[RMDB]
RNA sequence: GGGAACGACUCGAGUAGAGUCGAAAAGAUGGAGACAGGAAGUAGAUGAUGAUGCGCAAAGAGAUCGAGAAGGGCACUAACCGCCAGAUAGUGAAUACUCGAGAGCGCUGGCGGUACUUCCUAAGAACGAUAUAGUCGCUUUCGAGCGACUAUAUCGAAAAGAAACAACAACAACAAC
Reactivity to DMS in 0.01 (KOAc 150mM, MgCl2 10mM, bicine 150mM(pH8.5), 24C), signal-to-noise 4, nucleotides 027 to 126: g030a100u020g020g000a070g020a160c160a020g010g000a040a040g000u010a040g000a160u020g010a120u010g020a120u060g000c060g000c030a050a160a140g000a130g000a190u000c020g000a010g000a110a080g030g000g000c030a020c050u010a050a140c050c060g000c060c060a020g010a130u020a040g020u000g000a070a070u000a130c010u000c000g010a040g040a180g000c020g020c000u010g000g000c040g000g000u010a000c020u000u000c010c000u000a070a050g040a060a110
Reactivity to 2A3 in 0.01 (KOAc 150mM, MgCl2 10mM, bicine 150mM(pH8.5), 24C), signal-to-noise 5, nucleotides 027 to 126: g100a010u210g040g040a060g010a070c070a040g020g020a010a000g020u020a020g020a160u140g030a060u090g010a040u130g030c010g010c020a020a120a070g110a060g010a030u040c050g010a010g020a070a080g030g030g000c010a010c020u010a000a040c020c020g010c030c000a030g030a070u070a030g060u040g070a100a050u090a160c030u020c020g040a080g020a030g070c020g000c010u010g020g000c000g020g000u000a010c020u010u000c010c020u030a060a020g050a060a020
Chemical mapping of a 177-nucleotide RNA with DMS and 2A3. DMS (dimethyl sulfate) methylates the pairing face of unpaired adenines and cytosines. The DMS profile rests on 5,711 reads. For 2A3, 4,671 sequencing reads were counted. It was measured as part of the RMDB library OK1LIB.